Structure probing data (2A3 and DMS) for a 207-nucleotide construct. It was measured as part of the RMDB library RNAMAK.

[RMDB]
RNA sequence: GGGAACGACUCGAGUAGAGUCGAAAACGCUGGGCAGUCAACUAUUUGGCAUCGAUCGACUGAAGCGCGCACGGUCGGGAGCCAAACGUUGAGCUGCCUGUGCUGAAGCGCGCACGGCAACCGAAAGGUGCGAAACUUCGAAGCUUCGGCUUCGAAGGUACUCUUCAUGGUUCGCCAUGAAGAGUACAAAAGAAACAACAACAACAAC
Reactivity to 2A3 in 0.01 (KOAc 150mM, MgCl2 10mM, bicine 150mM(pH8.5), 24C), signal-to-noise 6, nucleotides 027 to 156: c030g010c020u050g010g010g000c000a000g010u030c000a000a010c020u110a200u300u180u210g010g000c040a080u300c090g010a020u000c000g020a010c020u050g050a170a090g030c010g000c000g000c000a020c030g010g000u010c000g000g010g010a040g010c010c000a110a080a040c150g010u010u020g020a060g010c000u000g000c000c000u000g000u010g000c010u040g020a100a040g020c010g000c000g000c000a010c010g030g000c020a030a030c000c000g040a130a040a030g020g000u020g010c020g030a130a070a060c000u010u000c000g010a000a010g000c000u080u150c280g080g000c000u000u010c000g030a000a000g000
Reactivity to DMS in 0.01 (KOAc 150mM, MgCl2 10mM, bicine 150mM(pH8.5), 24C), signal-to-noise 1, nucleotides 027 to 156: c090g030c010u000g010g010g040c010a080g000u000c020a040a050c020u000a210u000u000u000g000g000c030a300u000c110g000a070u020c000g020a090c040u000g000a030a090g010c030g030c050g040c000a300c040g020g000u000c000g040g040g040a090g060c000c010a030a040a000c150g030u000u000g010a100g000c020u000g010c020c020u000g000u010g070c020u000g000a030a070g050c050g030c010g000c000a300c040g000g030c030a060a100c040c020g010a070a100a170g000g020u000g030c000g000a080a130a210c000u000u020c000g010a060a020g000c000u000u000c300g070g000c000u000u000c000g020a010a000g020